[RMDB]
An RNA of 207 nucleotides, treated with DMS and 2A3 and read out base by base. DMS adducts were read by reverse transcription with MarathonRT. For 2A3, 4,015 sequencing reads were counted.
RNA sequence: GGGAACGACUCGAGUAGAGUCGAAAAUGGCAUUUCUGCCUCAGAAGGGAGGUUGGCAAACCUGAUCGCUAUGGCAUGCGCAUCGGCUGCUGCUGGUUUCCAAUUGCGCGAUGGAUUUAAAUAAAUGGACUUCGCAGAUCACAGCGCAGAAGCCGCCAUCGAUAAUGACAUUCGUGUCAUUAUCGAUAAAAGAAACAACAACAACAAC
Reactivity to DMS in 0.01 (KOAc 150mM, MgCl2 10mM, bicine 150mM(pH8.5), 24C), signal-to-noise 3, nucleotides 027 to 156: u010g020g010c020a140u000u010u000c070u010g010c000c010u010c040a110g000a150a120g010g010g000a060g020g010u000u000g040g010c050a070a070a070c030c010u010g000a070u000c040g010c050u010a120u000g000g080c220a120u000g010c030g020c060a070u000c070g020g000c000u010g010c050u010g000c010u010g020g020u020u000u000c020c050a080a120u000u010g020c050g020c000g010a200u000g020g000a110u010u000u000a050a090a160u010a060a130a160u000g010g020a080c040u010u010c030g030c040a180g020a130u000c090a070c020a110g010c040g020c000a060g030a060a090g030c030c020g020c030c050
Reactivity to 2A3 in 0.01 (KOAc 150mM, MgCl2 10mM, bicine 150mM(pH8.5), 24C), signal-to-noise 5, nucleotides 027 to 156: u070g020g000c030a040u020u050u080c050u070g030c010c010u030c020a160g040a150a050g070g030g020a030g000g000u070u120g050g000c070a080a040a060c000c010u060g020a060u070c040g000c050u060a070u120g080g000c040a040u100g020c030g010c040a040u040c030g040g000c000u050g010c020u030g010c020u030g050g000u010u060u000c000c000a060a070u080u080g010c020g010c000g020a010u010g010g010a000u060u100u150a120a180a100u200a050a030a100u150g060g010a050c060u100u040c130g000c070a010g010a030u030c020a010c010a060g000c020g000c030a010g020a040a000g000c040c030g010c020c000
The reactions ran in a buffer of 150 mM KOAc, 10 mM MgCl2 and 150 mM bicine (pH 8.5), at 24 C. Source: RMDB library OK3TST, as collected in RNAgym.